[RMDB]
RNA sequence: GGGAACGACUCGAGUAGAGUCGAAAAUGUGCGUCCGCGCAGACAACCAGGAGGUUGGCUUAGAAGCAGCCACCCCUUCAAAGAGUGCGUAACAGCUCACUGGUCGAGUGGACAUGCGCCGACAAUAAAAAAGGCACAGUUUCGACUGUGCCUUUUUAAAAGAAACAACAACAACAAC
Reactivity to 2A3 in 0.01 (KOAc 150mM, MgCl2 10mM, bicine 150mM(pH8.5), 24C), signal-to-noise 2, nucleotides 027 to 126: u140g000u000g040c030g000u010c000c040g010c060g050c040a000g000a100c000a040a110c000c000a020g000g000a080g000g000u190u150g000g000c000u060u020a120g040a280a000g120c050a000g000c000c000a020c000c070c000c010u000u050c020a080a140a000g000a000g040u090g020c130g060u030a110a010c050a130g000c030u050c050a070c000u020g000g020u080c020g040a040g030u070g020g010a020c000a020u040g040c000g010c010c010g030a030c090a060a060u260a060
Reactivity to DMS in 0.01 (KOAc 150mM, MgCl2 10mM, bicine 150mM(pH8.5), 24C), signal-to-noise 3, nucleotides 027 to 126: u010g020u000g030c090g000u010c040c060g030c020g000c100a110g010a100c300a180a080c080c050a030g000g000a090g020g000u020u000g000g000c000u000u030a060g020a130a100g020c300a080g000c020c000a030c010c050c010c010u000u000c060a040a190a120g000a020g000u000g000c050g020u000a110a100c160a200g000c010u000c000a140c010u010g000g010u000c030g020a070g010u030g010g000a010c030a120u000g030c000g000c010c040g010a070c130a070a090u040a030